[RMDB]
RNA sequence: GGGAACGACUCGAGUAGAGUCGAAAAAACAUUUGGCCCCAGUGCACGAAAAUUCUUCCAAGUUCUGGACCAAUUUGAUAACAUACAUGACUUGGUGUUUGUCUACGGCUGCUAUAGGCAUUGGGGUUGUGAAGCUUUAGUUCGCUAAAGCUUCACAAAAAGAAACAACAACAACAAC
Reactivity to DMS in 0.01 (KOAc 150mM, MgCl2 10mM, bicine 150mM(pH8.5), 24C), signal-to-noise 1, nucleotides 027 to 126: a060a100c130a140u000u020u010g010g000c000c010c000c030a000g010u000g000c010a100c050g000a080a080a060a090u000u010c030u000u000c030c060a040a090g000u010u010c180u000g000g020a060c110c100a050a140u000u020u000g000a080u010a060a040c150a050u000a130c010a020u010g030a010c080u010u000g010g030u000g030u010u010u020g040u010c030u010a110c100g010g020c120u000g000c130u000a120u000a070g000g010c000a000u000u000g000g000g010g030u010